[RMDB]
RNA sequence: GGGAACGACUCGAGUAGAGUCGAAAAGAUAUGGAAGAUUCUCUAGCGUGGCCGAGGAUCUAGGUAAAACUCAUAUCGGAAACGAUAUGAGGAGUACGCCUAGGGAGGCUCGGGAUCUUCCUAAGUCGCGUAUAGAAAAGUUCGCUUUUCUAUACGCAAAAGAAACAACAACAACAAC
Reactivity to 2A3 in 0.01 (KOAc 150mM, MgCl2 10mM, bicine 150mM(pH8.5), 24C), signal-to-noise 2, nucleotides 027 to 126: g030a030u080a050u160g000g020a010a000g030a090u300u060c120u000c110u230a160g220c150g300u300g100g010c030c020g010a300g010g010a020u000c010u000a010g000g030u080a020a090a050a040c000u020c000a010u000a000u000c000g040g030a030a080a020c010g000a020u000a000u000g000a000g000g000a010g010u020a030c130g000c000c000u000a000g000g000g010a010g000g000c000u000c030g010g000g010a000u000c000u010u000c010c020u010a070a000g030u030c090
Reactivity to DMS in 0.01 (KOAc 150mM, MgCl2 10mM, bicine 150mM(pH8.5), 24C), signal-to-noise 2, nucleotides 027 to 126: g000a090u000a210u000g000g000a050a010g000a020u000u000c000u010c190u010a160g090c230g030u000g020g060c020c000g010a080g010g020a010u010c010u000a000g000g010u000a030a080a240a160c010u000c000a010u000a000u000c000g010g000a060a030a120c000g010a010u000a000u000g010a020g000g000a050g020u000a100c300g000c020c010u010a010g000g000g000a030g020g040c010u000c070g010g000g000a020u000c000u000u000c000c000u000a040a100g000u000c090